An RNA of 177 nucleotides, treated with DMS and 2A3 and read out base by base. Reactivities are given for positions 27 through 126. 2A3 adducts were read by reverse transcription with SuperScript II with manganese. The RNA was probed in 150 mM KOAc, 10 mM MgCl2 and 150 mM bicine (pH 8.5) at 24 C. For 2A3, 3,798 sequencing reads were counted.
RNA sequence: GGGAACGACUCGAGUAGAGUCGAAAAGAUAUGGAACUCCUGCUACGUCAACAGCUCGGAAACGAGACAUGACGGUCAGGAGGUUCCUAAGUCAAAAGCAUUCGCAGAGUUCGCUCUGCGAAUGCAACAAAUUCAAUAGCUUCGGCUAUUGAAUUUGAAAAGAAACAACAACAACAAC
Reactivity to DMS in 0.01 (KOAc 150mM, MgCl2 10mM, bicine 150mM(pH8.5), 24C), signal-to-noise 3, nucleotides 027 to 126: g000a010u010a300u010g000g000a020a040c010u000c000c000u000g010c150u000a230c010g020u000c000a030a100c250a150g000c010u000c010g010g010a070a110a180c000g010a010g010a040c100a190u010g000a010c000g000g000u010c010a010g000g010a040g010g000u010u000c000c000u010a070a100g000u020c030a050a080a170a130g000c000a000u000u000c020g000c000a020g000a040g000u000u020c270g020c010u000c000u000g000c010g000a010a010u000g000c010a020a060
Reactivity to 2A3 in 0.01 (KOAc 150mM, MgCl2 10mM, bicine 150mM(pH8.5), 24C), signal-to-noise 2, nucleotides 027 to 126: g000a050u130a050u140g000g000a000a010c000u000c010c000u010g060c110u190a280c040g010u000c010a050a080c040a250g020c000u030c010g010g050a070a100a060c010g000a010g020a050c020a040u070g000a000c020g010g020u020c000a020g000g000a030g030g020u020u000c000c000u010a100a050g070u040c020a000a000a080a190g020c000a000u000u010c020g000c020a010g000a020g040u090u140c200g070c120u010c010u000g000c000g010a000a000u000g000c000a010a000